RNA sequence: GGGAACGACUCGAGUAGAGUCGAAAACUGGGGUCAGCCUCUCCAUCUGUGUGUGAGAGACAUCAGACAGCUGUCAGUGUAGCCGGAGCUGCACUGGCUUUUCCAUAUAGCAGCUGUGCUGCAGUAAACACAGUGCUUCUCCACAUUCUUCAGCCCCGAGAAAUAGACAUUUCGAUGUCUAUUUCUCAAAAGAAACAACAACAACAAC
Reactivity to DMS in 0.01 (KOAc 150mM, MgCl2 10mM, bicine 150mM(pH8.5), 24C), signal-to-noise 2, nucleotides 027 to 156: c050u000g010g020g030g010u010c040a130g020c010c020u000c000u000c020c000a040u000c090u010g030u030g020u010g000u000g020a040g010a030g000a010c030a100u000c020a090g010a090c040a050g000c110u000g050u010c030a030g020u000g030u000a020g040c010c090g010g020a210g010c000u000g000c010a020c010u000g000g020c040u010u020u010u020c060c060a120u000a130u010a110g010c050a070g040c010u000g040u010g010c030u000g020c030a250g020u000a070a060a050c050a050c000a040g010u010g020c020u000u000c010u000c010c040a080c060a150u000u000c030u010u000c020a120g020c030c030c020c080
The data come from the RNA Mapping Database (RMDB), library OK3TST. Chemical mapping of a 207-nucleotide RNA with DMS. Reactivities are rounded to 0.1 and cut off at 0 and 3. For DMS, 6,109 sequencing reads were counted.